Structure probing data (2A3 and DMS) for a 177-nucleotide construct.

RNA sequence: GGGAACGACUCGAGUAGAGUCGAAAAGUCAAAUAAACCAUCUAAAAUCGAACCUGUAGAUGAAGAUGGAGCGCCUGCAGUUUUGGUAUAGUUAGAUGGACCAAACCAUUCAUCAAAUAAAUCAGACAUCCAUGACGUAUUUCGAUACGUCAUGGAUAAAAGAAACAACAACAACAAC
Reactivity to 2A3 in 0.01 (KOAc 150mM, MgCl2 10mM, bicine 150mM(pH8.5), 24C), signal-to-noise 4, nucleotides 027 to 126: g060u070c040a060a020a030u170a060a140a070c000c000a000u020c000u010a010a040a020a110u080c030g010a010a040c000c020u030g040u080a020g000a070u090g050a090a080g070a070u140g120g010a020g010c040g010c000c000u000g000c020a040g000u010u030u030u020g040g000u130a080u060a160g090u020u040a040g000a030u020g000g000a070c020c000a070a040a030c020c010a040u080u180c030a080u100c070a070a090a160u180a060a150a090u180c030a020g060a100c040
Reactivity to DMS in 0.01 (KOAc 150mM, MgCl2 10mM, bicine 150mM(pH8.5), 24C), signal-to-noise 2, nucleotides 027 to 126: g010u010c040a070a090a070u030a040a130a100c010c000a040u000c000u010a030a080a100a110u010c090g020a070a050c180c000u010g010u000a060g030a020u010g000a150a080g010a090u000g000g030a100g040c050g000c030c000u000g040c040a050g000u000u000u000u000g000g000u020a030u040a040g000u000u020a020g000a020u000g000g010a060c070c070a100a050a130c110c080a080u000u010c020a020u060c080a040a080a060u040a090a080a040u060c100a100g020a170c250
The RNA was probed in 150 mM KOAc, 10 mM MgCl2 and 150 mM bicine (pH 8.5) at 24 C. For 2A3, 2,487 sequencing reads were counted.